Structure probing data (2A3 and DMS) for a 177-nucleotide construct. In probing experiments dimethyl sulfate is read out at A N1 and C N3, which are open when not base-paired. 2A3 adducts were read by reverse transcription with SuperScript II with manganese. Source: RMDB library OK2TRN, as collected in RNAgym.
RNA sequence: GGGAACGACUCGAGUAGAGUCGAAAAUCUCACUAUCAAAAGCAAAUUCCAAGUAGUGAGCACAAUGGAACUUGUUAGUAGGAGGCAGCACCUGCCAUCGUACCAUCUCAGCUCCAGUUGGCUGAGACUUGCCAACUCAAUUCGUUGAGUUGGCAAGAAAAGAAACAACAACAACAAC
Reactivity to 2A3 in 0.01 (KOAc 150mM, MgCl2 10mM, bicine 150mM(pH8.5), 24C), signal-to-noise 2, nucleotides 027 to 126: u010c000u000c010a020c050u170a140u220c050a110a030a110a000g080c000a020a030a110u040u030c000c020a100a070g060u080a010g060u160g220a020g110c070a000c000a020a150u130g060g000a020a020c010u000u000g010u060u040a060g020u020a020g020g050a020g020g000c030a000g050c060a040c060c040u000g020c000c000a070u030c030g060u040a030c020c040a130u000c000u000c010a000g010c000u020c050c010a070g060u140u080g090g000c030u020g000a000g020a020
Reactivity to DMS in 0.01 (KOAc 150mM, MgCl2 10mM, bicine 150mM(pH8.5), 24C), signal-to-noise 2, nucleotides 027 to 126: u000c000u000c000a100c130u000a080u010c100a070a110a160a210g010c080a040a060a070u000u000c030c020a080a130g010u020a040g010u000g020a110g010c190a090c070a090a110u000g020g020a040a060c070u010u000g000u000u000a050g030u010a030g010g020a040g010g000c040a080g010c140a050c130c030u000g000c010c040a020u000c030g010u010a080c080c070a140u000c000u010c030a020g030c000u010c020c180a090g000u010u010g010g010c010u000g010a020g000a020